[RMDB]
RNA sequence: GGGAACGACUCGAGUAGAGUCGAAAAGAUAUGGACCCAGAAAGCAACCCCGAACCCAUGAACUACACUGCAAGUCGGAAACGACUUGUCAGUGCAUGGGUUCGGGGUUUAAGCUGGGUCCUAAGUCCUAUCAAUGAGAGUUCGCUCUCAUUGAUAGAAAAGAAACAACAACAACAAC
Reactivity to DMS in 0.01 (KOAc 150mM, MgCl2 10mM, bicine 150mM(pH8.5), 24C), signal-to-noise 3, nucleotides 027 to 126: g010a110u000a270u000g010g010a020c000c010c000a020g010a130a080a180g040c300a060a030c010c000c010c010g020a010a000c000c000c000a010u010g000a100a050c140u040a300c010a010c000u000g010c010a000a020g000u000c000g010g010a130a110a210c020g010a010c000u000u000g000u010c000a010g020u000g000c010a010u000g000g000g020u000u000c010g000g000g000g010u000u000u000a010a110g010c000u000g000g010g000u000c000c000u000a010a100g010u000c050